[RMDB]
RNA sequence: GGGAACGACUCGAGUAGAGUCGAAAAAGUUUGGGCAGCUACCAGACAAUCGUUGUGAGUCCUAACAAAGCUAUGGCUGCGAACAGCAUGCAGGAUGGCCUGUGUCCCUGGGGAGGAAGGGUGCUGCUACAAUCCCGUUAUUCGUAACGGGAUUGUAAAAAGAAACAACAACAACAAC
Reactivity to 2A3 in 0.01 (KOAc 150mM, MgCl2 10mM, bicine 150mM(pH8.5), 24C), signal-to-noise 1, nucleotides 027 to 126: a000g060u030u070u050g050g020g020c030a020g000c040u080a080c040c000a000g050a050c010a070a120u110c120g060u080u080g060u020g070a070g000u000c010c000u040a100a000c030a120a080a010g040c030u060a050u100g140g000c030u040g010c020g040a020a010c030a030g040c030a010u140g020c000a010g020g030a070u060g050g000c000c050u100g000u050g020u040c000c000c000u030g000g050g000g000a090g000g040a030a040g030g050g000u000g010c010u030g000c020
Reactivity to DMS in 0.01 (KOAc 150mM, MgCl2 10mM, bicine 150mM(pH8.5), 24C), signal-to-noise 4, nucleotides 027 to 126: a100g000u000u000u000g010g000g020c040a090g000c040u000a120c040c030a100g000a040c050a090a100u000c120g020u000u000g010u000g000a150g020u010c020c030u020a080a100c140a050a110a090g000c040u000a080u000g020g010c030u000g000c050g010a040a070c110a080g010c060a040u010g010c030a070g010g000a110u000g010g010c030c040u010g020u000g000u000c030c030c000u000g000g000g000g010a090g000g000a070a070g010g000g000u000g010c040u000g000c090